[RMDB]
RNA sequence: GGGAACGACUCGAGUAGAGUCGAAAAGGCGUCCUGCGAGGACAGGUCGGCGGCCUCUAUAUCCGAGGCGAUCCUCGCUGCGGUCUUUGACAGAGGCGAGAAGGCCCUGGCGACCUCCGCGGUGCAGGGCCGACCUACUAUUCGUAGUAGGUCGGCCAAAAGAAACAACAACAACAAC
Reactivity to DMS in 0.01 (KOAc 150mM, MgCl2 10mM, bicine 150mM(pH8.5), 24C), signal-to-noise 2, nucleotides 027 to 126: g010g000c020g010u000c010c010u000g020c090g020a120g000g010a090c070a040g020g010u010c000g030g020c030g000g000c080c000u020c000u010a050u010a110u000c130c080g000a010g000g030c010g020a060u010c040c030u000c020g010c000u000g000c060g000g000u000c020u000u000u000g010a060c030a010g000a150g050g000c000g000a110g030a130a150g000g000c010c000c010u000g000g000c010g020a020c010c000u000c040c030g020c020g020g010u010g010c160a080g030
Reactivity to 2A3 in 0.01 (KOAc 150mM, MgCl2 10mM, bicine 150mM(pH8.5), 24C), signal-to-noise 2, nucleotides 027 to 126: g100g010c000g020u020c010c000u010g060c090g180a210g100g070a050c050a050g050g020u060c030g030g130c020g030g000c050c000u000c010u020a090u020a080u150c060c040g010a010g010g000c020g010a090u030c010c030u010c030g000c020u000g020c020g000g010u020c000u040u050u060g000a010c030a030g100a190g110g030c060g030a130g160a240a040g190g000c000c000c000u020g020g000c000g050a030c000c010u000c000c030g030c010g010g000u010g050c080a090g010
Overview
This 177-nucleotide RNA was probed chemically with DMS and 2A3. Source: RMDB library OK2TST, as collected in RNAgym. The DMS profile rests on 2,818 reads. Conditions: 150 mM KOAc, 10 mM MgCl2 and 150 mM bicine (pH 8.5), 24 C. DMS adducts were read by reverse transcription with MarathonRT. The 2A3 profile rests on 2,853 reads. 2A3 adducts were read by reverse transcription with SuperScript II with manganese.